[RMDB]
Chemical mapping of a 177-nucleotide RNA with 2A3 and DMS. 2A3 adducts were read by reverse transcription with SuperScript II with manganese. The 2A3 profile rests on 627 reads. Source: RMDB library OK2TRN, as collected in RNAgym.
RNA sequence: GGGAACGACUCGAGUAGAGUCGAAAAGCAAUUAACGUGCCGAUGGCGGCAAAAGUGAAUACUGUGGGCCGCAUUUUGCCGGGCAUGGAAUCUCGCCUGAUCCCUGUGCCGGGAAUCGAACAGGGCGGAUGUUUGGUCUUUUCGAAGACCAAACAUCAAAAGAAACAACAACAACAAC
Reactivity to 2A3 in 0.01 (KOAc 150mM, MgCl2 10mM, bicine 150mM(pH8.5), 24C), signal-to-noise 1, nucleotides 027 to 126: g040c010a020a000u240u070a190a080c010g020u020g000c010c000g200a190u150g240g050c000g000g000c000a000a000a000a130g060u060g050a240a010u080a300c100u090g020u160g090g140g000c000c000g000c090a090u020u100u090u030g050c110c000g050g000g000c000a000u000g010g030a030a060u010c000u000c040g000c000c010u000g070a070u050c000c000c000u060g060u060g060c020c030g000g080g150a080a110u150c040g010a040a010c010a100g020g070g000c040g010
Reactivity to DMS in 0.01 (KOAc 150mM, MgCl2 10mM, bicine 150mM(pH8.5), 24C), signal-to-noise 1, nucleotides 027 to 126: g020c060a120a020u020u030a080a170c040g000u000g010c010c020g000a080u020g010g020c000g010g010c020a010a040a070a050g010u000g010a190a060u010a080c110u000g010u020g000g000g000c030c060g000c000a080u000u010u000u000g010c120c000g020g000g050c010a010u020g010g020a060a090u020c050u000c120g000c010c030u000g010a120u000c000c010c000u000g000u000g030c120c020g000g000g000a110a070u000c060g000a160a100c110a110g000g000g020c300g000